Source: RMDB library 15KREP, as collected in RNAgym. Structure probing data (2A3 and DMS) for a 177-nucleotide construct. Reactivities are given for positions 27 through 126.
[RMDB]
RNA sequence: GGGAACGACUCGAGUAGAGUCGAAAAAGACCCGAGAUGAGCCUCGUGCCGAGGAGAGGCCGGAGACGGAGAGGCAGGAGGUCCCGAGGAGUAUCCAAGCAAAGAAGGGGAAGGAUCUCGAGGAAAAGACUAAUUUACAGUUCGCUGUAAAUUAGUCAAAAGAAACAACAACAACAAC
Reactivity to 2A3 in 0.01 (KOAc 150mM, MgCl2 10mM, bicine 150mM(pH8.5), 24C), signal-to-noise 2, nucleotides 027 to 126: a020g050a040c030c010c000g000a030g020a110u110g020a010g020c000c000u020c080g080u030g010c000c020g030a040g080g050a070g020a040g110g000c040c010g020g000a050g010a020c030g060g000a070g000a050g060g000c020a010g050g020a000g010g000u050c020c010c020g020a050g030g020a030g010u060a040u020c010c000a050a010g040c030a150a090a110g080a060a030g070g030g020g010a030a020g030g010a030u010c000u010c050g040a120g000g060a030a090a010a010
Reactivity to DMS in 0.01 (KOAc 150mM, MgCl2 10mM, bicine 150mM(pH8.5), 24C), signal-to-noise 2, nucleotides 027 to 126: a210g000a140c010c000c010g020a070g000a100u000g000a150g000c050c010u000c020g000u010g020c050c000g010a140g050g030a150g000a080g000g000c030c020g040g000a080g000a140c070g020g020a070g020a190g000g000c040a010g030g020a040g010g010u000c010c020c010g000a110g000g000a070g040u000a060u000c050c020a110a110g010c150a040a050a090g000a140a090g000g010g000g000a100a100g000g000a040u000c020u000c030g020a100g000g000a070a050a080a100
High DMS reactivity at an A or C suggests that its Watson-Crick edge is free. For 2A3 the reverse transcriptase was SuperScript II with manganese. Conditions: 150 mM KOAc, 10 mM MgCl2 and 150 mM bicine (pH 8.5), 24 C.